[RMDB]
RNA sequence: GGGAACGACUCGAGUAGAGUCGAAAAGAUAUGGACUCACCGAAAGCAACAGCGUGGUCUCGGAAACGAGACGUAACAUCGACAUGCUUGAGGUGAGUCCUAAGUCAAACCCAACUUCGGUUGGGAACUAUUCUAUGAACUUCGGUUCAUAGAAUAGAAAAGAAACAACAACAACAAC
Reactivity to DMS in 0.01 (KOAc 150mM, MgCl2 10mM, bicine 150mM(pH8.5), 24C), signal-to-noise 8, nucleotides 027 to 126: g010a040u000a300u010g010g010a020c000u010c000a000c000c000g010a300a020a010g010c010a030a060c210a140g010c030g020u000g010g010u000c000u000c000g000g000a080a080a160c010g010a000g010a010c000g010u000a020a080c100a020u000c010g010a100c090a170u000g010c000u000u010g010a300g000g000u000g000a010g000u000c000c000u000a010a080g010u000c040a060a080a130c000c000c000a010a010c010u000u010c150g030g000u000u000g000g000g000a020a090
Reactivity to 2A3 in 0.01 (KOAc 150mM, MgCl2 10mM, bicine 150mM(pH8.5), 24C), signal-to-noise 4, nucleotides 027 to 126: g020a000u060a050u090g000g000a000c000u000c010a000c010c000g020a020a020a000g000c010a010a110c050a210g140c020g030u030g020g000u020c000u000c010g020g020a050a070a050c010g000a010g000a010c000g010u050a010a030c050a300u300c020g060a060c040a060u090g000c000u000u010g000a000g000g000u010g000a000g000u000c000c000u010a000a000g010u000c000a010a000a050c000c010c000a000a000c010u070u080c220g110g000u010u010g000g000g020a000a010
Structure probing data (DMS and 2A3) for a 177-nucleotide construct. The reactions ran in a buffer of 150 mM KOAc, 10 mM MgCl2 and 150 mM bicine (pH 8.5), at 24 C. 2A3 adducts were read by reverse transcription with SuperScript II with manganese.